[RMDB]
RNA sequence: GGGAACGACUCGAGUAGAGUCGAAAAAGAUGAAUGCUUUGAUUAUGCAUGAAUCCAUAAUGAUAAAGUGCUAUUGAAUGAUCAAGUAAUUUGUAAGGUUUUUAUUAUCUUCGCAAGAGUUGUAUUGCCUAAUUGAGGUAUUCGUACCUCAAUUAGGAAAAGAAACAACAACAACAAC
Reactivity to DMS in 0.01 (KOAc 150mM, MgCl2 10mM, bicine 150mM(pH8.5), 24C), signal-to-noise 5, nucleotides 027 to 126: a080g010a070u010g000a070a030u000g000c000u000u010u020g010a030u000u000a050u000g000c000a020u000g010a280a040u000c020c140a130u020a130a090u020g020a020u010a030a080a130g010u000g000c010u010a190u040u020g010a080a080u000g000a030u000c010a020a020g000u000a040a050u000u010u000g000u010a060a060g010g010u000u000u010u020u020a030u050u010a030u010c030u000u010c080g010c150a040a090g010a100g010u000u000g020u010a120u010u010g010
Reactivity to 2A3 in 0.01 (KOAc 150mM, MgCl2 10mM, bicine 150mM(pH8.5), 24C), signal-to-noise 7, nucleotides 027 to 126: a020g070a050u130g070a100a010u080g010c010u100u080u060g030a020u040u070a020u170g000c000a000u100g060a060a010u010c040c020a100u160a210a090u300g030a000u040a040a120a000g030u020g000c020u040a050u160u180g140a140a130u110g010a020u030c020a030a000g040u080a110a280u030u080u070g090u060a030a050g010g030u020u010u100u030u000a130u100u030a010u020c030u060u050c030g020c070a030a030g030a020g080u000u050g020u030a090u040u180g030